[RMDB]
RNA sequence: GGGAACGACUCGAGUAGAGUCGAAAAGAUAUAGUGCUUGGUUCCUAGUAGGUGCUCAGUAAGUGUUUGUGACAUAAUUCGUUUAUUGAGCACCUCCUAUCAAUCAAGCACUGUGCUAGGCUCUGGACAAUCACAGAUAGUUCGCUAUCUGUGAUUGAAAAGAAACAACAACAACAAC
Reactivity to DMS in 0.01 (KOAc 150mM, MgCl2 10mM, bicine 150mM(pH8.5), 24C), signal-to-noise 5, nucleotides 027 to 126: g000a120u010a020u010a010g020u000g010c000u000u000g000g010u000u000c040c020u000a010g010u010a010g000g020u000g010c000u000c000a010g030u000a000a010g010u010g010u000u000u000g010u010g020a180c300a130u020a070a020u000u000c020g010u010u000u000a000u000u000g000a010g010c010a010c000c000u010c030c010u000a000u000c080a000a010u000c000a000a010g000c000a000c000u000g020u000g000c040u000a090g010g010c120u000c020u000g000g010a300
Reactivity to 2A3 in 0.01 (KOAc 150mM, MgCl2 10mM, bicine 150mM(pH8.5), 24C), signal-to-noise 9, nucleotides 027 to 126: g060a010u080a000u020a100g000u000g010c000u000u000g000g010u010u010c020c010u000a000g000u000a000g000g000u000g000c000u000c000a000g010u010a010a010g010u010g090u050u050u040g260u130g160a120c090a140u300a120a050u150u020c010g020u010u000u000a000u000u000g000a000g000c000a000c000c000u000c000c000u000a000u010c010a000a000u000c000a000a000g000c000a000c000u000g000u000g000c030u050a080g160g000c030u000c010u030g000g000a010
About this RNA: The record gives the reactivity of an RNA of 177 nucleotides to DMS and 2A3. DMS adducts were read by reverse transcription with MarathonRT. The RNA was probed in 150 mM KOAc, 10 mM MgCl2 and 150 mM bicine (pH 8.5) at 24 C.